[RMDB]
RNA sequence: GGGAACGACUCGAGUAGAGUCGAAAAACAUCGAAGAGGGCGGGUCGCUGACCAUCAUCGCCACUGCGAUGGUCGAGACCGGGUCCACUGGUGACACGGUCAUUUUCGAGGAGUUCAAGGGCACCGGGACGGGCGUAAAGUUCGCUUUACGCCCGUCAAAAGAAACAACAACAACAAC
Reactivity to 2A3 in 0.01 (KOAc 150mM, MgCl2 10mM, bicine 150mM(pH8.5), 24C), signal-to-noise 1, nucleotides 027 to 126: a000c010a010u110c000g040a000a040g080a280g090g020g000c050g000g000g010u050c020g000c300u060g010a010c040c020a020u130c060a050u180c010g040c060c030a060c060u140g000c000g010a020u000g020g050u020c010g010a090g000a090c010c000g010g000g010u070c060c060a070c250u090g110g090u230g010a000c000a000c020g000g010u020c100a080u090u050u130u020c010g000a010g030g020a130g020u030u020c000a000a030g040g010g000c030a050c110c110g010g070
Reactivity to DMS in 0.01 (KOAc 150mM, MgCl2 10mM, bicine 150mM(pH8.5), 24C), signal-to-noise 1, nucleotides 027 to 126: a170c020a060u000c040g010a090a060g010a120g020g010g030c030g000g000g010u060c030g000c140u010g000a010c000c010a060u010c100a120u000c070g050c000c060a020c120u010g000c010g010a030u000g030g000u020c070g020a110g000a030c000c000g000g000g000u000c000c050a280c170u000g000g000u000g000a050c020a040c010g030g000u020c030a070u000u020u000u010c030g000a100g000g000a180g010u000u010c060a030a160g000g030g050c040a060c050c070g010g000